[RMDB]
RNA sequence: GGGAACGACUCGAGUAGAGUCGAAAAGAGCGAUUAGACAAAGGGGUAGAGCUACAUAUUAGAUAGCUGUAUAAUCGUUCAAGUUACAUCAAAACAUCUUCAAUAAUUAUUACUUACUUUCCUUUCUGCCAGAGUACGGUAUUCGUACCGUACUCAACCAUUCGAGUAUAUUCGUAUACUCGAAUGGAAAAGAAACAACAACAACAAC
Reactivity to 2A3 in 0.01 (KOAc 150mM, MgCl2 10mM, bicine 150mM(pH8.5), 24C), signal-to-noise 8, nucleotides 027 to 156: g010a000g000c000g000a010u000u020a020g030a070c080a050a100a060g050g020g020g040u070a040g020a000g060c000u010a010c010a080u290a190u170u150a100g160a270u010a010g020c010u010g010u040a010u010a010a000u000c000g010u000u000c010a020a020g020u040u120a060c040a100u150c060a040a120a050a070c030a100u070c080u280u120c100a070a130u150a220a080u170u190a100u130u100a100c040u060u040a040c000u050u080u080c010c000u020u070u050c030u040g060c020c030a040g000a000g000u000a000c000g000g010u000a020u020u060c130g030u010a000c000c000g000u000a000c000u000c000a000a000
Reactivity to DMS in 0.01 (KOAc 150mM, MgCl2 10mM, bicine 150mM(pH8.5), 24C), signal-to-noise 2, nucleotides 027 to 156: g020a060g000c000g020a050u000u000a000g000a090c060a060a100a060g030g000g040g020u000a050g000a110g020c010u000a020c010a130u000a180u000u000a120g030a210u000a040g030c020u000g000u000a040u000a030a030u000c030g020u000u010c010a020a120g010u000u000a060c030a140u000c120a050a080a100a190c060a090u040c000u010u000c030a080a110u000a030a110u000u010a110u000u010a060c080u010u000a070c070u000u010u000c020c030u000u000u000c050u010g000c030c080a090g000a040g030u000a000c000g010g010u010a000u000u000c270g020u010a030c000c000g000u010a000c000u000c000a020a090